RNA sequence: GGGAACGACUCGAGUAGAGUCGAAAAGUGAGUGGUAUUGUUUAUUAAGUAAUUUUAGUCUGACUGCACCUCAGUUAAGUCAUCUGUAAAAUGGAGACAAUGAUAAUACCUCACAGACUUAUAACCACAAAAGUAAUACAAAUAAAGCACUUAAACACUCUCCACUUAGAUUCGUCUAAGUGGAGAGAAAAGAAACAACAACAACAAC
Reactivity to DMS in 0.01 (KOAc 150mM, MgCl2 10mM, bicine 150mM(pH8.5), 24C), signal-to-noise 1, nucleotides 027 to 156: g010u030g000a060g010u000g000g000u000a030u010u010g000u000u010u000a100u080u010a160a260g000u000a050a010u000u020u000u030a030g000u000c030u000g040a090c080u010g000c060a200c040c060u000c100a090g030u030u000a080a220g040u000c010a060u030c040u020g030u000a040a060a090a100u010g000g000a200g010a080c050a130a080u010g030a080u030a050a130u000a030c040c130u000c000a140c010a120g000a080c030u040u000a050u000a060a100c010c000a100c030a010a070a040a180g000u000a060a110u000a130c040a020a050a090u040a100a080a170g000c030a000c040u000u000a030a040a060c090a140
Reactivity to 2A3 in 0.01 (KOAc 150mM, MgCl2 10mM, bicine 150mM(pH8.5), 24C), signal-to-noise 3, nucleotides 027 to 156: g030u010g020a010g000u090g060g050u040a050u080u030g050u040u070u070a080u080u170a060a020g030u030a120a150u050u050u020u120a020g000u020c020u020g000a000c000u030g040c080a030c090c030u060c030a000g000u020u040a060a020g020u000c020a160u000c130u010g090u100a020a110a010a070u080g020g000a020g010a050c040a040a030u000g000a000u010a060a020u020a090c000c020u000c000a000c000a010g000a000c000u100u120a040u030a150a010c050c040a040c050a090a180a010a000g070u110a010a110u150a160c040a030a090a020u140a110a130a040g060c060a020c030u090u160a110a080a010c020a020